[RMDB]
This 177-nucleotide RNA was probed chemically with DMS and 2A3. The reactions ran in a buffer of 150 mM KOAc, 10 mM MgCl2 and 150 mM bicine (pH 8.5), at 24 C. The data come from the RNA Mapping Database (RMDB), library OK2TRN.
RNA sequence: GGGAACGACUCGAGUAGAGUCGAAAAGCACGGAGACAUGCACGGAAACGUAGACGGAGGCUCCAUGUCGAACGUGGCUGUCCGAGGCCUGCGUAUUUGACUGGUAAUUCAGUCGUUAGGACAGCUACAUCCUCCGGAUGUUCGCAUCCGGAGGAUGAAAAGAAACAACAACAACAAC
Reactivity to DMS in 0.01 (KOAc 150mM, MgCl2 10mM, bicine 150mM(pH8.5), 24C), signal-to-noise 3, nucleotides 027 to 126: g010c050a070c090g000g020a200g010a050c060a030u010g000c180a050c100g000g000a030a080a080c050g040u010a040g000a060c030g020g000a110g020g020c010u000c050c020a020u010g020u010c030g000a090a090c150g020u000g010g000c000u000g010u000c000c010g010a150g040g010c050c030u000g000c100g010u010a120u000u010u020g000a030c010u000g010g000u010a130a150u020u010c000a020g000u000c010g000u000u010a130g010g000a020c000a000g000c010u010a030
Reactivity to 2A3 in 0.01 (KOAc 150mM, MgCl2 10mM, bicine 150mM(pH8.5), 24C), signal-to-noise 2, nucleotides 027 to 126: g080c000a000c060g010g040a050g020a040c040a050u060g000c050a010c090g030g040a070a120a010c040g030u030a040g080a040c020g040g020a010g060g000c010u010c010c000a010u040g020u000c040g040a170a080c070g010u010g030g000c000u000g000u000c000c000g010a080g040g000c010c030u080g050c050g010u050a170u140u100u130g000a020c000u020g030g030u070a080a090u150u110c000a000g010u010c010g000u040u060a030g000g000a010c010a000g000c010u000a010